[RMDB]
RNA sequence: GGGAACGACUCGAGUAGAGUCGAAAAACUGCGACAGAAAAGAAGCGUGAAACAAAAUGAAUCUCGGCAAAGCUACGCGCUUCUACAUACCAGCAGCCGAGAACUGGCGCAGAUUACAAACGCAGACAAUAAAAUAUAAAUUCGUUUAUAUUUUAUUAAAAGAAACAACAACAACAAC
Reactivity to 2A3 in 0.01 (KOAc 150mM, MgCl2 10mM, bicine 150mM(pH8.5), 24C), signal-to-noise 2, nucleotides 027 to 126: a000c000u000g000c000g010a030c000a080g090a030a180a070a020g000a010a010g000c010g000u010g060a150a100a000c060a010a150a090a040u140g090a060a060u020c000u000c000g000g000c060a260a040a060g080c090u120a050c020g000c000g010c000u000u000c000u010a020c010a050u120a050c020c010a010g000c020a010g000c010c010g000a010g000a000a040c000u000g000g000c020g010c000a000g010a040u060u080a030c060a070a150a000c050g080c090a010g080a170c080
Reactivity to DMS in 0.01 (KOAc 150mM, MgCl2 10mM, bicine 150mM(pH8.5), 24C), signal-to-noise 1, nucleotides 027 to 126: a120c020u000g000c010g010a030c150a100g010a190a040a030a030g000a020a010g010c010g030u020g040a140a070a140c140a090a020a210a120u010g000a050a060u000c010u000c000g020g000c010a120a100a090g020c080u030a070c100g000c010g010c000u000u000c000u010a080c060a070u040a050c070c110a130g060c010a150g000c000c000g010a000g000a060a110c000u000g000g000c000g000c000a000g000a170u030u010a080c120a030a080a080c210g020c080a090g000a140c060
Chemical mapping of a 177-nucleotide RNA with 2A3 and DMS.
It was measured as part of the RMDB library OK1LIB.
For DMS the reverse transcriptase was MarathonRT.
2A3 is a SHAPE reagent: it acylates the 2'-hydroxyl of flexible nucleotides of all four kinds.